About this RNA:
Source: RMDB library OK2TRN, as collected in RNAgym. Chemical mapping of a 177-nucleotide RNA with 2A3 and DMS. Conditions: 150 mM KOAc, 10 mM MgCl2 and 150 mM bicine (pH 8.5), 24 C. Reactivities are given for positions 27 through 126.

[RMDB]
RNA sequence: GGGAACGACUCGAGUAGAGUCGAAAAGCAGUUGAAUAGCUUGGAUGCAGAGAUGCUGCAGAAAAAUCAUGAUCAGUUCGCUACGGGCAGCGGCCCUCUUCGUGGCAGUAUCACUCAAUGCCAAGGGUCUGACGAGAAAUUUCGAUUUCUCGUCAGAAAAAGAAACAACAACAACAAC
Reactivity to 2A3 in 0.01 (KOAc 150mM, MgCl2 10mM, bicine 150mM(pH8.5), 24C), signal-to-noise 2, nucleotides 027 to 126: g000c040a060g020u100u100g120a130a090u100a080g070c010u000u030g030g020a010u050g020c090a010g000a010g000a030u020g050c010u000g000c040a040g250a020a140a010a010a000u100c000a010u020g090a060u040c040a020g040u130u110c020g000c010u030a070c100g090g120g000c070a010g060c010g070g000c050c000c000u000c010u030u000c030g070u030g140g000c010a000g010u050a030u040c020a030c040u040c000a040a050u210g020c000c000a020a000g060g000g000
Reactivity to DMS in 0.01 (KOAc 150mM, MgCl2 10mM, bicine 150mM(pH8.5), 24C), signal-to-noise 2, nucleotides 027 to 126: g010c070a060g000u000u010g020a070a120u010a070g010c030u000u000g010g010a070u010g010c120a030g010a130g000a050u000g040c020u010g000c010a200g010a020a050a090a070a100u040c040a020u000g020a040u010c060a090g000u020u000c060g010c020u000a090c080g000g020g020c110a110g000c060g010g000c040c100c050u000c050u000u010c050g020u000g000g040c010a040g000u000a050u010c030a080c080u000c060a090a050u000g020c020c010a060a050g010g010g030